[RMDB]
RNA sequence: GGGAACGACUCGAGUAGAGUCGAAAAGUCUCUAUCUUCGGAUAGAGACAAAUAUAAGUACGACUUAGAGCUAGAUCAAAUAAUAUCGUCGACAUCGUAAAAAAAGAGGUAUGUUCGCAUACCUCAAGUAUUGAUGACAGUUCGCUGUCAUCAAUACAAAAGAAACAACAACAACAAC
Reactivity to 2A3 in 0.01 (KOAc 150mM, MgCl2 10mM, bicine 150mM(pH8.5), 24C), signal-to-noise 3, nucleotides 027 to 126: g000u010c000u000c000u010a000u000c010u030u040c240g100g000a000u000a000g020a000g000a000c000a000a010a000u020a000u010a040a060g070u030a030c020g010a000c020u060u130a040g000a010g090c070u100a040g020a090u070c050a110a070a120u200a100a070u110a070u090c060g050u020c020g050a020c020a040u080c050g070u120a010a110a010a090a030a030a090g000a000g010g000u000a010u010g020u030u050c180g000c050a000u010a000c000c000u000c000a010a010
Reactivity to DMS in 0.01 (KOAc 150mM, MgCl2 10mM, bicine 150mM(pH8.5), 24C), signal-to-noise 3, nucleotides 027 to 126: g010u000c000u000c010u000a010u000c000u030u030c240g050g000a010u000a000g000a010g000a000c010a010a030a060u000a130u000a100a110g010u000a020c050g010a060c030u000u000a210g040a040g010c090u000a060g010a020u000c080a090a050a070u010a080a070u000a060u000c040g020u010c010g000a170c300a080u000c030g000u010a000a000a040a110a100a210a100g030a010g010g010u000a000u000g000u000u020c160g040c010a010u000a000c000c000u000c000a010a080

Background
Structure probing data (2A3 and DMS) for a 177-nucleotide construct. The data come from the RNA Mapping Database (RMDB), library M2PK50. For 2A3 the reverse transcriptase was SuperScript II with manganese. For DMS, 1,927 sequencing reads were counted. Values cover nucleotides 27 to 126.